[RMDB]
RNA sequence: GGGAACGACUCGAGUAGAGUCGAAAAUCAAUUUUUAACCUAUGGUUUUGUUUCCACAGAGCAACUGAUAGCUUAUUGAAUUUUGGUGACUAUGUCAGCUGGAGUCAGGGUUAAUAGAUGGAGAGAAAUGUGGAUCGAUAGAGUAUGAGAAAGGAACUGUGUAUGCUUCUUUCGAGAAGCAUACACAAAAAGAAACAACAACAACAAC
Reactivity to DMS in 0.01 (KOAc 150mM, MgCl2 10mM, bicine 150mM(pH8.5), 24C), signal-to-noise 1, nucleotides 027 to 156: u000c040a070a080u030u030u010u000u010a080a180c010c010u010a110u030g000g020u000u000u000u000g050u000u000u000c010c030a150c160a080g000a120g030c000a050a080c010u000g010a060u010a090g000c040u010u000a100u000u000g020a060a170u000u000u030u000g020g010u010g010a020c040u010a060u000g010u000c040a070g000c020u020g020g000a130g020u000c080a070g040g020g050u000u000a050a050u000a060g020a130u000g000g010a070g030a130g000a030a050a090u010g030u010g000g020a090u000c010g050a140u000a100g000a080g030u000a020u000g000a050g000a030a050a090g020g010a050a140c180
Reactivity to 2A3 in 0.01 (KOAc 150mM, MgCl2 10mM, bicine 150mM(pH8.5), 24C), signal-to-noise 2, nucleotides 027 to 156: u040c000a000a050u050u030u060u120u220a050a130c000c000u040a040u100g000g010u010u010u070u060g080u000u060u000c090c000a030c030a040g100a000g030c030a010a060c060u140g020a120u070a060g020c010u020u090a010u130u190g040a060a070u080u060u060u130g030g000u030g010a030c010u060a050u190g020u020c030a010g000c020u080g060g000a010g010u080c050a020g080g000g000u010u010a010a010u020a040g120a050u030g040g000a010g000a000g020a030a000a160u160g010u050g000g000a030u070c040g000a000u030a050g070a020g050u030a050u100g060a070g070a040a110a000g140g100a000a050c080